The record gives the reactivity of an RNA of 177 nucleotides to 2A3 and DMS. The reactions ran in a buffer of 150 mM KOAc, 10 mM MgCl2 and 150 mM bicine (pH 8.5), at 24 C. DMS adducts were read by reverse transcription with MarathonRT.
[RMDB]
RNA sequence: GGGAACGACUCGAGUAGAGUCGAAAAAACGCGCUUAAGCAAAUUAAGCAAUCCCUAAUUUGAAUUUGUAGAACAUUCCCAGUCUCAAUUCAAAUAUCAUUUUAACAUUGUCUAUAACAGAGACAAUAUACAGAUAGACCUUCGGGUCUAUCUGUAUAAAAGAAACAACAACAACAAC
Reactivity to 2A3 in 0.01 (KOAc 150mM, MgCl2 10mM, bicine 150mM(pH8.5), 24C), signal-to-noise 3, nucleotides 027 to 126: a010a000c120g040c050g010c020u020u020a010a000g020c070a160a030a300u020u030a010a000g000c020a040a140u050c000c000c000u020a050a120u010u010u000g000a000a000u130u060u120g080u290a010g000a090a010c020a280u070u070c030c000c010a060g020u010c000u000c000a020a010u000u000c000a010a010a050u160a050u050c200a200u100u150u070u100a060a040c040a060u000u020g010u000c000u000a070u010a260a130c050a030g200a000g000a050c030a020a000u020
Reactivity to DMS in 0.01 (KOAc 150mM, MgCl2 10mM, bicine 150mM(pH8.5), 24C), signal-to-noise 2, nucleotides 027 to 126: a060a080c150g030c300g000c010u000u020a010a020g000c190a100a060a060u030u020a020a000g000c000a120a110u020c000c040c050u050a060a030u000u050u000g000a010a050u000u000u050g030u020a000g000a040a000c000a060u030u020c050c010c020a300g050u000c010u000c000a000a050u010u000c000a000a000a020u010a060u040c190a060u020u050u010u020a050a050c260a020u000u000g000u000c000u000a120u060a030a110c280a090g000a010g000a040c020a000a030u020
Values cover nucleotides 27 to 126.